An RNA of 207 nucleotides, treated with 2A3 and DMS and read out base by base.
[RMDB]
RNA sequence: GGGAACGACUCGAGUAGAGUCGAAAAUAGGCGAACGAGAGGCCCUCUCAUGUGCGGAGUUGUCACGCUGACAUAAUUGUUAUGAUGUCCGAUUCCGGUAGCAUCGCGGCGAUGUUUUCAUAGGACAUCUUAUGAACCCAAGGGCUUCGGGGAAGCACGAUACCUAUCACUUCGGUGAUAGGUAUCGAAAAGAAACAACAACAACAAC
Reactivity to 2A3 in 0.01 (KOAc 150mM, MgCl2 10mM, bicine 150mM(pH8.5), 24C), signal-to-noise 3, nucleotides 027 to 156: u120a040g030g000c040g030a070a030c070g020a070g000a010g080g000c000c000c010u000c010u040c050a070u110g050u100g060c050g040g010a080g030u050u090g050u070c040a020c080g030c060u080g040a010c000a010u120a070a090u190u070g090u090u090a080u180g000a000u000g000u000c000c000g020a010u130u040c050c010g070g040u030a000g020c010a000u000c040g010c160g280g000c100g000a010u000g030u000u090u000u110c070a060u090a060g020g000a010c000a000u000c000u010u020a030u010g060a020a070c000c010c040a030a030g020g000g000c000u020u020c010g000g000g000g040a100a010g050c050a000
Reactivity to DMS in 0.01 (KOAc 150mM, MgCl2 10mM, bicine 150mM(pH8.5), 24C), signal-to-noise 2, nucleotides 027 to 156: u000a090g020g030c030g000a090a080c060g000a110g000a080g010g010c010c010c010u010c080u010c090a120u010g030u000g000c070g030g000a140g030u000u000g020u020c030a100c030g010c010u010g030a100c050a100u000a100a130u000u000g020u010u010a100u000g000a050u000g000u000c010c000g020a250u000u010c110c070g020g000u000a050g010c040a020u000c000g050c130g030g010c090g020a030u000g000u010u010u000u010c060a100u010a170g000g000a080c040a030u010c010u000u000a080u000g000a020a090c050c040c010a110a060g020g020g020c000u010u000c010g000g010g050g000a080a090g010c020a210